[RMDB]
RNA sequence: GGGAACGACUCGAGUAGAGUCGAAAAUUAUGUGUGUGUACAUAUGAUGGGAUAUGUAUACACAUUGUUACUUACAUGUAUGUGUAUAUAUAUUUUUGGAAUUGGCUCACAUGAUUGUGGAGGCUGACCGUCUAGGACAAUUCGUUGUCCUAGACGGAAAAGAAACAACAACAACAAC
Reactivity to 2A3 in 0.01 (KOAc 150mM, MgCl2 10mM, bicine 150mM(pH8.5), 24C), signal-to-noise 2, nucleotides 027 to 126: u090u070a070u070g010u000g030u010g000u010g050u050a100c010a000u200a000u090g110a120u180g090g010g000a000u000a000u010g020u000a020u000a000c000a000c000a030u000u050g010u020u030a090c040u100u080a020c030a090u110g120u260a060u140g040u030g020u000a000u000a000u000a010u010a110u080u090u030u080u140g080g050a140a080u030u020g030g000c020u040c040a020c000a040u100g120a170u190u070g030u020g070g300a060g070g000c030u010g010a020
Reactivity to DMS in 0.01 (KOAc 150mM, MgCl2 10mM, bicine 150mM(pH8.5), 24C), signal-to-noise 2, nucleotides 027 to 126: u010u000a010u000g010u000g000u000g010u000g030u010a020c010a010u010a000u000g010a290u010g020g000g000a120u000a000u010g010u000a000u000a000c010a000c000a010u010u000g000u010u010a100c180u020u010a050c090a070u000g010u010a040u010g010u000g010u000a010u000a040u000a050u000a030u000u000u000u000u000g000g010a090a110u000u000g000g020c020u000c010a000c010a030u010g000a110u010u000g010u000g000g000a120g010g010c030u000g010a180
Chemical mapping of a 177-nucleotide RNA with 2A3 and DMS. The DMS profile rests on 3,675 reads. For 2A3, 1,840 sequencing reads were counted. The reactions ran in a buffer of 150 mM KOAc, 10 mM MgCl2 and 150 mM bicine (pH 8.5), at 24 C.